[RMDB]
Chemical mapping of a 207-nucleotide RNA with 2A3 and DMS. Reactivities are given for positions 27 through 156. Source: RMDB library RNAMAK, as collected in RNAgym. DMS adducts were read by reverse transcription with MarathonRT.
RNA sequence: GGGAACGACUCGAGUAGAGUCGAAAAUCCUAAGUCUAUGUGCUAACUCCGAUGAAGGAACUGGGAGAAGUCGGAAACGACUUCGAAGAACAGUUCUGGAGGAGGACCCACAUAGAUAUGGAAAACUUACGACAUCCCUUCGGGGAUGUCGUAAGAACAUGAAAGUGAGUUUCGACUCACUUUCAUGAAAAGAAACAACAACAACAAC
Reactivity to 2A3 in 0.01 (KOAc 150mM, MgCl2 10mM, bicine 150mM(pH8.5), 24C), signal-to-noise 2, nucleotides 027 to 156: u010c010c000u030a150a010g010u000c000u010a000u000g010u000g050c030u080a240a040c000u000c010c000g300a300u030g010a020a000g020g000a010a000c000u000g020g000g010a100g000a010a000g010u000c010g070g000a160a090a080c010g020a000c010u000u000c020g020a080a000g010a030a030c000a000g000u010u010c000u010g000g010a000g010g000a010g000g000a010c010c000c000a000c000a000u000a000g000a000u020a030u020g000g010a100a120a020a050c010u010u000a010c000g000a000c000a000u010c000c020c010u030u090c300g020g000g000g000a000u000g000u010c010g000u000a000a000g000a000a000
Reactivity to DMS in 0.01 (KOAc 150mM, MgCl2 10mM, bicine 150mM(pH8.5), 24C), signal-to-noise 2, nucleotides 027 to 156: u010c010c000u000a100a110g040u000c030u010a010u020g020u010g000c030u010a090a300c000u000c000c010g100a200u010g010a300a300g000g000a010a000c000u000g030g030g010a300g000a010a020g000u000c000g020g000a160a140a280c010g020a020c000u000u000c000g020a110a210g000a190a200c020a020g020u020u000c010u000g020g010a070g040g000a020g000g000a090c300c290c000a000c030a040u000a000g000a020u000a150u010g020g000a070a080a170a140c010u000u010a000c000g010a040c000a020u000c010c000c010u000u000c300g050g060g040g000a000u000g050u020c000g000u000a000a000g000a050a210